The data come from the RNA Mapping Database (RMDB), library RFM100. The record gives the reactivity of an RNA of 177 nucleotides to 2A3. The RNA was probed in 150 mM KOAc, 10 mM MgCl2 and 150 mM bicine (pH 8.5) at 24 C.
[RMDB]
RNA sequence: GGGAACGACUCGAGUAGAGUCGAAAAAUUUAUCCUGGCUCUCUGGUGAACUUACUAGGCAAGGAGCAUCAGUCUAAGUAACAGGUGGUUAUUAAUGUUGCUCUUAACUAAUGACAAUGUUUCUGGCUGGAUGAUAACUCUUCGGAGUUAUCAUCCAAAAAGAAACAACAACAACAAC
Reactivity to 2A3 in 0.01 (KOAc 150mM, MgCl2 10mM, bicine 150mM(pH8.5), 24C), signal-to-noise 1, nucleotides 027 to 126: a000u140u120u050a230u000c010c000u010g000g000c000u000c000u000c010u050g000g000u030g130a040a030c000u030u040a190c050u230a000g040g030c160a110a050g070g000a000g000c000a000u000c000a000g080u000c150u120a050a100g000u000a110a050c050a090g070g200u070g070g000u190u000a040u090u000a160a120u100g030u070u000g110c000u060c020u010u180a000a000c160u010a120a020u140g000a040c000a050a050u030g000u000u000u000c000u040g000g000c000